Chemical mapping of a 207-nucleotide RNA with 2A3.

[RMDB]
RNA sequence: GGGAACGACUCGAGUAGAGUCGAAAAAUGACCAAUCCACACAUCAUGACCGAUAGUUACUGGAUGGUCUGAUCGCCACUCAAAUACCGUCUCAUCGUCGCUGCCGAGAUCAUACAUGGCUGCGCGAUAGCUAAAGUGAUGUGCGGUUGGGCGGGUAUACUUGAAGGCACUUCGGUGCCUUCAAGUAAAAAGAAACAACAACAACAAC
Reactivity to 2A3 in 0.01 (KOAc 150mM, MgCl2 10mM, bicine 150mM(pH8.5), 24C), signal-to-noise 1, nucleotides 027 to 156: a000u140g000a000c000c000a080a210u010c000c000a050c000a060c000a150u020c000a000u160g230a130c050c050g150a110u050a090g050u050u050a050c030u100g000g020a020u000g000g050u000c110u070g000a040u070c040g000c040c000a000c030u090c060a050a060a000u110a040c010c010g000u000c020u120c150a070u060c070g210u140c060g000c020u010g000c000c030g100a200g070a190u190c050a020u160a300c050a030u070g000g000c000u050g000c000g000c000g050a000u080a000g000c000u120a060a080a120g120u040g040a020u030g080u100g000c040g000g000u000u000g060g050g020c270g000g040g050u000a090

2A3 adducts were read by reverse transcription with SuperScript II with manganese. Values cover nucleotides 27 to 156.